Chemical mapping of a 177-nucleotide RNA with DMS and 2A3. DMS adducts were read by reverse transcription with MarathonRT. 2A3 adducts were read by reverse transcription with SuperScript II with manganese. Values cover nucleotides 27 to 126. Conditions: 150 mM KOAc, 10 mM MgCl2 and 150 mM bicine (pH 8.5), 24 C.
RNA sequence: GGGAACGACUCGAGUAGAGUCGAAAAUACCAUUAGUAUCGACACAACUUUAUUUCAGGCACCUUGCGCUCCUUUUCCGAUUUGUAAUAGUGGUGUCCAAUGGAAUAUUGGGGCUACUACAGCUAUAGUAGGGAGGAUACUUCGGUAUCCUCCCUACAAAAGAAACAACAACAACAAC
Reactivity to DMS in 0.01 (KOAc 150mM, MgCl2 10mM, bicine 150mM(pH8.5), 24C), signal-to-noise 1, nucleotides 027 to 126: u000a300c010c020a150u010u000a130g030u000a090u000c080g000a150c080a080c080a090a080c100u010u000u010a060u040u000u000c050a090g010g010c030a040c060c000u000u010g030c120g000c010u000c010c000u000u040u000u010c010c010g020a080u000u010u010g000u000a060a220u000a000g010u010g010g060u000g000u000c000c010a040a040u010g000g050a100a070u030a040u000u000g010g010g000g010c000u010a000c020u000a040c200a150g020c110u010a050u000a060
Reactivity to 2A3 in 0.01 (KOAc 150mM, MgCl2 10mM, bicine 150mM(pH8.5), 24C), signal-to-noise 1, nucleotides 027 to 126: u120a020c000c050a060u000u050a030g010u050a070u090c050g140a020c020a000c020a200a100c000u070u240u180a180u070u070u080c070a070g020g040c060a010c010c030u010u030g080c030g000c020u030c010c000u000u000u020u010c010c040g090a080u000u050u190g080u090a000a030u020a090g050u020g100g000u020g140u040c020c000a070a020u030g050g090a240a020u130a050u220u010g000g020g000g000c000u020a000c000u000a000c040a020g140c010u060a080u060a200